Chemical mapping of a 207-nucleotide RNA with 2A3. Source: RMDB library M2RFPK, as collected in RNAgym. Reactivities are given for positions 27 through 156.
RNA sequence: GGGAACGACUCGAGUAGAGUCGAAAACUCAAUGUAGGGAAUAACAUUGAAUUGAUACACAUACCUUUUUCGGUGUAGGGAAAAACACCGAAUUGAUACAAAUACCUUUCUCAAUGUAGGGAAUAACAAAACAGGCAUCGCUUCGGCGAUGCCUGAACACCGCAUUAUCCUUCGGGAUAAUGCGGUGAAAAGAAACAACAACAACAAC
Reactivity to 2A3 in 0.01 (KOAc 150mM, MgCl2 10mM, bicine 150mM(pH8.5), 24C), signal-to-noise 1, nucleotides 027 to 156: c000u000c000a000a000u010g030u090a070g000g100g060a140a190u090a070a000c010a030u000u000g010a060a090u120u110g070a070u190a170c080a000c000a100u220a130c000c000u020u000u000u000u000c000g020g010u000g010u000a000g000g000g110a000a090a000a000a190c010a000c000c090g010a010a010u020u000g010a000u000a030c010a010a030a070u070a170c000c020u020u150u030c050u030c070a050a160u150g010u060a030g030g020g060a080a000u060a100a040c050a040a050a050a040c000a000g000g000c000a000u010c000g010c020u070u080c140g000g000c000g000a000u000g020c000c000u010g000a000a000